[RMDB]
RNA sequence: GGGAACGACUCGAGUAGAGUCGAAAAUCGAGUGAACGAGUGAGAUCGUUCGUACGAUCGAUCUCACACGUGUGAGAGAGUACACACGAUCACACACGAACGUUCUCGUACGUUCUCACGUUCGUGUGUACGAGAGAUCGUACUCGAGAUCGAACACUAUCGUUCAAGCUUUCGAGCUUGAACGAUAAAAAGAAACAACAACAACAAC
Reactivity to 2A3 in 0.01 (KOAc 150mM, MgCl2 10mM, bicine 150mM(pH8.5), 24C), signal-to-noise 3, nucleotides 027 to 156: u020c010g000a060g040u100g100a070a020c020g000a040g040u020g020a020g000a030u020c040g000u080u020c040g030u170a110c230g000a000u020c020g020a000u010c000u040c000a010c020a010c020g030u030g000u110g020a040g010a000g000a030g070u040a010c010a000c000a000c010g010a020u050c010a030c020a030c000a020c170g000a010a000c010g030u110u090c150u050c250g070u180a020c000g000u000u020c030u020c030a030c110g040u010u010c000g010u000g000u010g010u020a010c040g000a010g000a000g000a060u020c030g090u050a010c000u000c000g010a010g020a140u040c000g020a020a000c030a000c040
Reactivity to DMS in 0.01 (KOAc 150mM, MgCl2 10mM, bicine 150mM(pH8.5), 24C), signal-to-noise 1, nucleotides 027 to 156: u000c030g000a090g040u000g020a130a050c000g000a080g010u000g000a070g010a040u000c000g030u000u000c020g020u010a050c180g010a000u000c000g000a090u000c050u000c030a050c010a110c050g030u010g000u000g010a190g010a090g010a170g000u020a070c030a030c030a060c050g020a110u010c010a180c010a180c090a080c080g020a020a000c010g010u000u010c100u000c160g000u010a090c020g020u000u000c010u020c010a120c090g000u000u010c010g010u010g010u000g030u010a000c000g010a040g000a280g000a110u000c040g000u000a010c010u000c030g040a090g000a130u000c030g000a060a090c040a060c190

This 207-nucleotide RNA was probed chemically with 2A3 and DMS. The RNA was probed in 150 mM KOAc, 10 mM MgCl2 and 150 mM bicine (pH 8.5) at 24 C. The 2A3 profile rests on 2,085 reads. The data come from the RNA Mapping Database (RMDB), library OK3TST. For 2A3 the reverse transcriptase was SuperScript II with manganese. For DMS, 1,775 sequencing reads were counted.